[RMDB]
RNA sequence: GGGAACGACUCGAGUAGAGUCGAAAAGACGGCGAUCAUAAACUUUAUGUGCAAGAUCUACUCAAACAACAAGCAGACCUUGUUCUCCAAGCUUAUGAAGAGGGCGCCUACUUCUUUGUAUGUGGAAGUACACAGGGUAGUUCGCUACCCUGUGUACAAAAGAAACAACAACAACAAC
Reactivity to 2A3 in 0.01 (KOAc 150mM, MgCl2 10mM, bicine 150mM(pH8.5), 24C), signal-to-noise 2, nucleotides 027 to 126: g060a010c080g000g000c000g010a040u050c030a010u040a040a090a020c030u070u100u080a120u220g040u010g010c020a020a000g010a020u000c010u010a020c030u020c030a080a170a300c040a030a010c030a100a000g050c030a010g020a040c000c000u000u000g020u010u010c000u030c030c030a070a000g000c000u030u050a030u050g000a030a040g100a090g160g150g020c000g030c000c010u080a100c010u070u090c000u030u110u130g130u090a150u120g110u020g070g000a070a070
Reactivity to DMS in 0.01 (KOAc 150mM, MgCl2 10mM, bicine 150mM(pH8.5), 24C), signal-to-noise 2, nucleotides 027 to 126: g010a090c090g010g010c020g000a200u000c040a020u000a010a030a050c040u000u000u000a090u000g000u000g010c030a010a020g000a040u000c010u000a010c040u000c080a130a110a070c280a030a050c180a080a030g020c030a020g000a010c020c000u010u000g010u000u010c010u010c300c210a050a040g010c020u000u000a020u000g000a040a100g010a130g020g030g030c070g000c030c030u010a120c080u000u000c020u010u000u000g020u000a080u010g020u010g010g000a040a070
Chemical mapping of a 177-nucleotide RNA with 2A3 and DMS. The DMS profile rests on 1,600 reads. The reactions ran in a buffer of 150 mM KOAc, 10 mM MgCl2 and 150 mM bicine (pH 8.5), at 24 C. Reactivities are given for positions 27 through 126.